[RMDB]
RNA sequence: GGGAACGACUCGAGUAGAGUCGAAAACUCCCUCUCCUUGUCGGUGAACCCGCUCUUGUGAGGCCUCUUCCCAGGUCCGGAGUCGACCUCCAUCUGAUCCGUCCGGGGCCUCUUCGCCGGGGGAGCCAUGGCACUUCCUUCGGGAAGUGCAAAAGAAACAACAACAACAAC
Reactivity to DMS in 0.01 (KOAc 150mM, MgCl2 10mM, bicine 150mM(pH8.5), 24C), signal-to-noise 3, nucleotides 027 to 129: c100u010c000c000c070u010c010u010c000c010u020u060g030u000c100g000g050u100g030a190a200c050c040c050g000c070u030c130u090u060g000u030g060a060g040g000c000c050u010c030u020u020c010c080c030a100g030g000u040c050c120g000g000a000g010u040c040g020a100c070c010u040c030c000a070u040c030u080g030a020u000c060c070g000u040c100c100g000g010g000g060c080c000u020c000u010u110c080g030c300c030g060g070g000g050g000a240g000c080c010a090u050g010
Reactivity to 2A3 in 0.01 (KOAc 150mM, MgCl2 10mM, bicine 150mM(pH8.5), 24C), signal-to-noise 6, nucleotides 027 to 129: c030u040c000c000c000u050c020u010c000c000u080u090g120u140c050g000g000u050g010a050a060c000c000c000g080c050u080c040u160u230g040u060g060a020g000g010c000c000u000c000u060u030c010c020c010a020g050g000u000c040c090g030g020a020g060u020c020g090a110c000c000u030c010c010a080u040c070u080g030a060u050c030c020g090u020c020c020g030g010g010g000c000c000u010c010u050u010c000g000c020c000g010g000g010g000g010a010g000c030c020a110u070g080